[RMDB]
RNA sequence: GGGAACGACUCGAGUAGAGUCGAAAAAAAAUUCAAAAUUGCGUGUAUCUUCUCGACGAUUUUGAACGAGUCAACAAGUAUUUGAGCGAGAAUCAAGAUUGCCGCGUCGUUUUAUGUCGAAUAUCAAAGUCGAGUAGCGUGGAGCGUGCGCUCGUAAGAUGAAUGUGUGAUUCGUCACACAUUCAUCAAAAGAAACAACAACAACAAC
Reactivity to 2A3 in 0.01 (KOAc 150mM, MgCl2 10mM, bicine 150mM(pH8.5), 24C), signal-to-noise 3, nucleotides 027 to 156: a000a000a000a000u060u020c030a020a000a010a010u020u020g010c020g000u040g060u070a120u150c140u280u080c070u120c070g220a280c020g010a020u000u000u000u050g020a040a010c030g040a010g030u060c010a020a020c040a150a050g100u080a170u150u090u120g010a010g020c020g010a060g070a100a070u030c020a030a020g070a210u030u110g050c030c000g020c010g040u040c010g010u010u010u040u140a100u130g150u060c020g010a030a010u110a060u240c110a190a060a060g050u040c010g010a000g030u020a030g000c020g010u040g020g050a060g020c030g030u030g030c030g020c000u020c010g060u060a010a020
Reactivity to DMS in 0.01 (KOAc 150mM, MgCl2 10mM, bicine 150mM(pH8.5), 24C), signal-to-noise 2, nucleotides 027 to 156: a030a040a070a040u000u000c020a030a010a050a080u000u000g010c010g040u000g020u000a150u020c080u000u010c080u000c030g010a190c080g010a040u000u020u000u000g010a040a030c000g000a120g030u000c030a100a040c060a040a050g030u000a090u030u000u000g010a090g000c020g010a190g000a120a160u000c060a030a070g020a120u000u000g010c020c010g010c110g050u000c010g000u010u000u000u020a090u020g010u000c050g000a090a050u000a220u000c130a040a050a070g010u000c010g010a100g050u000a050g030c090g010u000g030g020a090g020c050g030u010g000c030g000c000u000c010g050u000a090a180